[RMDB]
RNA sequence: GGGAACGACUCGAGUAGAGUCGAAAAGCCGCUCAAGUGCGCGCCUAAGACCUUCUGGGUGAACGAGGGCAAGCACGCCAAGUUCCGCUGCUACGUGAUGGGCAAGCCCGAGCCCGAGAUCGAAUGGGGGAAAACAUUGAUUCGUCAAUGUUUUCCCAAAAGAAACAACAACAACAAC
Reactivity to 2A3 in 0.01 (KOAc 150mM, MgCl2 10mM, bicine 150mM(pH8.5), 24C), signal-to-noise 1, nucleotides 027 to 126: g040c000c030g020c050u060c100a230a100g030u030g090c000g000c000g000c000c010u060a110a090g090a200c010c000u000u110c160u220g110g000g000u110g100a090a050c020g010a080g000g000g000c000a020a000g050c020a020c020g000c010c000a040a040g030u020u040c040c010g060c030u020g030c010u040a040c020g090u040g050a120u170g000g000g010c020a020a020g020c000c000c010g000a010g000c010c000c040g040a020g000a020u180c060g050a120a090u200g130g000
Reactivity to DMS in 0.01 (KOAc 150mM, MgCl2 10mM, bicine 150mM(pH8.5), 24C), signal-to-noise 4, nucleotides 027 to 126: g010c020c020g020c050u000c070a140a100g010u010g030c020g020c300g000c010c020u020a050a270g010a100c020c010u000u000c130u010g000g030g010u010g000a080a100c080g000a220g010g000g010c030a060a260g020c040a060c050g000c050c060a090a110g010u000u000c030c030g030c030u010g000c020u020a100c030g010u010g000a090u000g020g000g000c000a030a300g020c000c000c020g010a080g000c020c000c000g000a120g010a090u000c040g000a130a090u010g010g010
Chemical mapping of a 177-nucleotide RNA with 2A3 and DMS. For DMS, 2,598 sequencing reads were counted. For 2A3, 1,433 sequencing reads were counted. The RNA was probed in 150 mM KOAc, 10 mM MgCl2 and 150 mM bicine (pH 8.5) at 24 C.